[RMDB]
Source information: This 207-nucleotide RNA was probed chemically with 2A3 and DMS. For DMS the reverse transcriptase was MarathonRT. The 2A3 profile rests on 3,767 reads. 2A3 adducts were read by reverse transcription with SuperScript II with manganese. Conditions: 150 mM KOAc, 10 mM MgCl2 and 150 mM bicine (pH 8.5), 24 C. Source: RMDB library RNAMAK, as collected in RNAgym.
RNA sequence: GGGAACGACUCGAGUAGAGUCGAAAAGCGUACUACGAUGUGAGGGUGCAGGGAGAUAAUGCCCGCGCUAGUCCCAAAUAGGACUAGCCCGCCAUUAUCUUUGAUCUGCACCUCCCCACCACAUCGUAUCGCAAACGUGGCCCUUCGGGGCCACGAACUCCUUUAAGAUGUUCGCAUCUUAAAGGAGAAAAGAAACAACAACAACAAC
Reactivity to 2A3 in 0.01 (KOAc 150mM, MgCl2 10mM, bicine 150mM(pH8.5), 24C), signal-to-noise 2, nucleotides 027 to 156: g000c000g030u090a100c050u010a000c030g000a000u000g010u010g010a050g000g020g000u000g010c010a000g030g000g010a000g000a000u000a000a000u000g010c040c050c020g000c020g010c010u000a000g000u020c010c010c020a180a200a120u300a080g000g000a000c000u000a000g000c040c010c000g010c020c000a000u000u000a000u020c000u120u120u090g110a110u030c000u000g000c000a000c000c000u020c000c000c000c010a020c000c000a010c010a010u010c000g000u010a010u300c000g000c030a000a080a010c010g000u000g000g020c000c000c000u020u040c230g020g000g000g000c000c010a010c000g000a000a020
Reactivity to DMS in 0.01 (KOAc 150mM, MgCl2 10mM, bicine 150mM(pH8.5), 24C), signal-to-noise 1, nucleotides 027 to 156: g000c020g060u010a100c090u010a000c010g000a020u000g000u050g030a300g010g000g100u000g030c000a030g000g000g000a000g000a080u030a000a040u000g030c130c040c020g060c220g040c000u000a000g000u000c010c000c030a040a120a300u000a030g020g030a030c000u000a010g050c000c010c030g050c070c000a020u000u010a000u000c000u000u030u000g010a050u000c010u010g040c060a050c000c000u030c140c060c020c040a300c150c030a040c010a000u000c000g000u000a030u000c000g000c020a030a080a100c060g030u000g000g010c000c020c000u000u000c260g020g010g050g000c000c000a000c000g020a020a080